Chemical mapping of a 177-nucleotide RNA with DMS. It was measured as part of the RMDB library OK2TST. The reactions ran in a buffer of 150 mM KOAc, 10 mM MgCl2 and 150 mM bicine (pH 8.5), at 24 C. Reactivities are given for positions 27 through 126.

RNA sequence: GGGAACGACUCGAGUAGAGUCGAAAAGGCUCCAGCUGGUGGUGGACGGGAUCGAUCCCGAGAUCAUAAAAACCGUGCUCUACACCGAGCUCAACGAAAUGCAGUCCCGGCACGAGGUGGGGGCCAACGCAAUGAUGAGUUUCGACUCAUCAUUGCGAAAAGAAACAACAACAACAAC
Reactivity to DMS in 0.01 (KOAc 150mM, MgCl2 10mM, bicine 150mM(pH8.5), 24C), signal-to-noise 1, nucleotides 027 to 126: g030g010c030u000c060c060a080g030c020u000g030g000u000g050g000u000g020g000a110c020g000g010g000a020u000c060g000a160u000c000c040c000g070a190g020a060u010c020a080u010a120a070a130a100a300c100c030g000u000g030c020u000c110u050a050c040a030c030c040g000a000g010c020u020c190a060a110c160g010a060a050a140u000g010c100a020g000u010c030c000c000g000g000c020a140c180g010a090g000g000u030g010g010g000g010g030c000c050a070a020